RNA sequence: GGGAACGACUCGAGUAGAGUCGAAAAGAUAUGGAAUAUGGACGCUCACAGGCUAUGAAGUCGGAAACGAUGGAGCCUGUAGGCGUCAACAUAUUCCUAAGUCAAAAGAUCGUCUUCGGACGAUCAAUCGCAAUAGAAGGUUCGCCUUCUAUUGCGAAAAAGAAACAACAACAACAAC
Reactivity to DMS in 0.01 (KOAc 150mM, MgCl2 10mM, bicine 150mM(pH8.5), 24C), signal-to-noise 2, nucleotides 027 to 126: g000a100u000a300u020g000g000a010a020u000a020u010g000g000a040c020g030c000u000c030a020c000a030g000g010c000u000a190u010g020a150a170g020u000c010g000g000a130a120a140c000g010a030u000g000g000a030g050c000c000u010g000u000a000g000g030c000g000u000c000a000a050c010a000u000a010u000u000c010c000u000a020a120g030u000c070a080a110a230a100g010a020u000c000g000u010c000u000u020c200g030g000a010c000g000a000u000c000a050a020
Reactivity to 2A3 in 0.01 (KOAc 150mM, MgCl2 10mM, bicine 150mM(pH8.5), 24C), signal-to-noise 2, nucleotides 027 to 126: g000a050u070a060u200g000g010a000a020u000a040u020g000g030a020c010g010c010u070c060a000c000a000g000g050c000u050a230u300g050a050a000g020u010c010g000g050a050a070a040c000g000a010u020g000g030a000g000c010c020u010g000u000a000g000g020c000g000u000c000a010a000c000a000u010a000u010u000c000c010u040a150a030g050u040c010a000a000a120a150g000a000u010c000g030u000c010u040u090c300g150g010a010c000g010a000u000c000a000a020